[RMDB]
RNA sequence: GGGAACGACUCGAGUAGAGUCGAAAAAGUCACCUAUUACGAUAGGUGACAUUUGAACCAGCGAACAAUUCAGUUGCGAGAUACGAGGUUUCAGUCUGAAUCAUAGUAGCCAUUACGAUGGCUACAACUCACUCCCGACUGUUCGCAGUCGGGAGAAUCCUUGUAGAUAGUUCGCUAUCUACAAGGAAAAAGAAACAACAACAACAAC
Reactivity to 2A3 in 0.01 (KOAc 150mM, MgCl2 10mM, bicine 150mM(pH8.5), 24C), signal-to-noise 3, nucleotides 027 to 156: a000g000u000c000a000c000c000u010a000u000u100a070c230g030a010u000a000g040g000u000g000a000c010a000u000u000u060g020a000a010c020c010a020g090c030g050a040a000c010a080a080u060u030c020a020g030u060u070g090c050g030a050g010a080u050a100c020g020a090g080g060u070u120u200c030a040g090u050c040u060g060a040a030u050c030a070u140a180g020u000a000g000c000c010a010u040u070a060c290g120a010u010g000g000c000u000a000c010a010a010c010u070c030a070c010u010c000c000c010g030a010c000u020g030u040u070c190g010c130a000g010u000c000g000g000g010a000g000a000a000
Reactivity to DMS in 0.01 (KOAc 150mM, MgCl2 10mM, bicine 150mM(pH8.5), 24C), signal-to-noise 2, nucleotides 027 to 156: a110g010u000c000a030c000c000u000a020u010u020a110c250g010a080u000a020g010g020u000g010a010c010a000u000u000u000g050a110a300c020c010a130g020c070g010a040a130c050a110a120u000u000c050a090g000u000u000g000c030g000a110g020a090u020a080c080g000a210g030g000u000u000u010c010a090g020u010c060u000g000a060a100u020c110a090u000a140g010u000a010g010c010c000a040u000u000a160c180g030a090u010g030g010c000u000a000c020a050a050c080u000c060a140c010u000c020c010c010g000a050c000u010g000u000u010c220g030c020a020g000u000c010g020g050g000a010g000a000a010